[RMDB]
About this RNA: An RNA of 170 nucleotides, treated with 2A3 and DMS and read out base by base. The RNA was probed in 150 mM KOAc, 10 mM MgCl2 and 150 mM bicine (pH 8.5) at 24 C. For 2A3, 18,675 sequencing reads were counted.
RNA sequence: GGGAACGACUCGAGUAGAGUCGAAAAGCUUAUCCCGGGGAACUCGGCGAAUCGUCCCCGCAUGGCAGAGACCGAGCCCCCUUCGGAAAAGGACCGGAGGAGGGAGCUAGGAGCGUGGGGGGGCCGGCAGGAUUGCUCUUCGGAGCAAUCAAAAGAAACAACAACAACAAC
Reactivity to 2A3 in 0.01 (KOAc 150mM, MgCl2 10mM, bicine 150mM(pH8.5), 24C), signal-to-noise 8, nucleotides 027 to 129: g020c030u110u110a060u180c020c000c010g000g020g010g000a070a040c040u030c080g010g000c060g080a110a120u100c040g040u050c010c010c000c000g090c050a050u120g110g000c040a040g030a010g030a200c010c000g020a010g020c010c000c000c000c010u030u040c020g020g010a050a080a080a110g140g080a110c010c010g000g000a030g030g010a190g000g020g000a010g030c010u020a030g000g050a040g010c020g010u080g010g010g000g000g000g030g050c010c000g020g010c020a010g010
Reactivity to DMS in 0.01 (KOAc 150mM, MgCl2 10mM, bicine 150mM(pH8.5), 24C), signal-to-noise 6, nucleotides 027 to 129: g000c080u030u050a070u030c050c000c050g030g000g000g010a060a110c040u000c040g000g000c060g050a100a080u060c130g000u000c010c030c010c100g060c080a050u020g010g010c060a090g000a140g000a160c020c040g000a170g030c010c010c010c000c020u000u000c000g030g030a060a060a110a110g050g050a050c040c040g000g000a000g040g010a110g040g030g010a050g000c070u030a080g000g000a100g020c040g050u030g020g010g010g060g020g000g020c050c030g000g000c080a110g000
As a SHAPE reagent, 2A3 marks flexible, mostly unpaired nucleotides at the ribose 2'-OH.
The DMS profile rests on 24,535 reads.
For DMS the reverse transcriptase was MarathonRT.
Source: RMDB library 15KLIB, as collected in RNAgym.